[RMDB]
RNA sequence: GGGAACGACUCGAGUAGAGUCGAAAAUACUAAGGCAGUCUCUAUGUCCAAUAUUCCUAUCACUGGUACGUCCGAAUGUGAGCCUGGCGAUUUAAGUGAGGAUAUGUUAGAAGGAAUAAAAGGUUCAGAAGUUAGUUCCAUUCGUGGAACUAACUUCAAAAGAAACAACAACAACAAC
Reactivity to 2A3 in 0.01 (KOAc 150mM, MgCl2 10mM, bicine 150mM(pH8.5), 24C), signal-to-noise 1, nucleotides 027 to 126: u080a040c030u040a060a060g060g000c000a010g050u060c000u010c020u140a090u170g060u040c030c010a030a020u040a050u090u040c000c020u060a080u130c010a020c080u010g080g010u160a060c050g020u030c010c020g070a150a050u220g060u030g060a060g020c000c000u010g000g000c020g090a090u000u000u260a090a000g020u020g030a060g000g010a030u020a040u120g040u010u000a110g010a060a020g060g020a010a020u060a140a050a040a000g070g000u000u040c030a000
Reactivity to DMS in 0.01 (KOAc 150mM, MgCl2 10mM, bicine 150mM(pH8.5), 24C), signal-to-noise 2, nucleotides 027 to 126: u010a100c170u010a090a100g000g000c010a080g020u000c030u030c050u000a120u010g000u000c060c000a100a200u000a100u000u010c020c010u010a140u020c040a040c040u010g040g000u010a050c070g010u010c020c060g010a140a060u020g020u000g000a070g010c020c020u020g000g000c000g010a080u000u010u000a050a050g040u000g010a140g010g000a040u000a040u000g020u000u000a050g010a090a070g020g000a070a060u000a080a050a140a100g000g000u000u010c060a060